[RMDB]
The record gives the reactivity of an RNA of 177 nucleotides to DMS and 2A3.
RNA sequence: GGGAACGACUCGAGUAGAGUCGAAAAGAUAUGGAAUGCGGUCUUGGAUUUAACAGUAAACCGUUUGACGAGCAUCGGAAACGAUGCUCCGAGGUUUACUGUUUGUCAGACCGGCAUUCCUAAGUCACAGCUUAGACUAGUUCGCUAGUCUAAGCUGAAAAGAAACAACAACAACAAC
Reactivity to DMS in 0.01 (KOAc 150mM, MgCl2 10mM, bicine 150mM(pH8.5), 24C), signal-to-noise 2, nucleotides 027 to 126: g000a100u030a300u000g010g010a000a000u010g020c000g000g000u000c000u000u010g050g010a020u010u010u000a010a010c000a000g010u000a000a000a020c000c000g000u030u010u000g010a220c300g000a020g030c000a030u000c010g000g010a120a180a260c000g010a000u000g010c030u010c000c000g000a040g050g010u000u000u000a000c000u010g030u000u000u000g000u010c000a050g020a010c010c000g010g030c010a000u000u000c000c000u000a040a070g010u010c080a110
Reactivity to 2A3 in 0.01 (KOAc 150mM, MgCl2 10mM, bicine 150mM(pH8.5), 24C), signal-to-noise 1, nucleotides 027 to 126: g040a000u140a080u190g000g010a020a000u030g030c020g060g050u060c070u230u300g120g020a060u300u300u230a010a030c000a030g030u010a020a030a020c040c000g060u300u210u300g070a060c040g030a010g040c000a000u040c000g000g000a080a060a010c010g020a000u010g010c000u010c000c000g030a020g000g000u010u000u000a010c010u000g020u030u000u010g020u000c000a020g050a010c000c030g000g010c000a000u000u000c000c000u020a110a000g020u020c000a030
The RNA was probed in 150 mM KOAc, 10 mM MgCl2 and 150 mM bicine (pH 8.5) at 24 C. The data come from the RNA Mapping Database (RMDB), library TTRINS.